[RMDB]
RNA sequence: GGGAACGACUCGAGUAGAGUCGAAAAAAGGGAACGCGGGGGAAGGAUCAUAUGACGAGAGGGGAUGAGCUGGUAAAGAGGGGUGGAACGUCGGGUGGAAGCACUCCCAAGAAGAGCAGAGAGAAGGAUGGAAAUGGCUUCGGCCAUUUCAAAAGAAACAACAACAACAAC
Reactivity to 2A3 in 0.01 (KOAc 150mM, MgCl2 10mM, bicine 150mM(pH8.5), 24C), signal-to-noise 2, nucleotides 027 to 129: a000a000g040g010g010a090a040c040g010c040g040g020g000g000g000a010a020g040g020a060u030c010a060u050a100u180g120a000c020g020a020g000a030g070g000g000g000a030u050g000a000g000c090u030g010g010u070a070a090a000g020a030g060g000g000g000u050g040g000a060a000c000g050u030c000g040g020g010u070g020g040a010a010g030c030a070c030u000c000c000c010a010a000g010a000a000g020a010g000c050a000g020a020g010a000g050a110a000g060g000a010u150g000
Reactivity to DMS in 0.01 (KOAc 150mM, MgCl2 10mM, bicine 150mM(pH8.5), 24C), signal-to-noise 2, nucleotides 027 to 129: a010a000g060g010g000a090a050c080g050c070g000g030g000g110g040a050a040g010g000a050u030c090a080u070a090u050g000a050c120g000a090g040a050g050g000g000g060a040u040g040a060g050c150u010g000g090u060a030a070a120g010a120g020g050g030g050u050g040g010a030a030c000g050u000c050g000g000g000u050g020g010a120a090g000c110a090c060u070c040c060c000a050a020g020a000a000g030a050g020c040a000g000a090g040a070g040a050a030g050g040a090u020g030
An RNA of 170 nucleotides, treated with 2A3 and DMS and read out base by base. For DMS, 6,295 sequencing reads were counted. DMS adducts were read by reverse transcription with MarathonRT. Reactivities are given for positions 27 through 129. 2A3 adducts were read by reverse transcription with SuperScript II with manganese. Conditions: 150 mM KOAc, 10 mM MgCl2 and 150 mM bicine (pH 8.5), 24 C.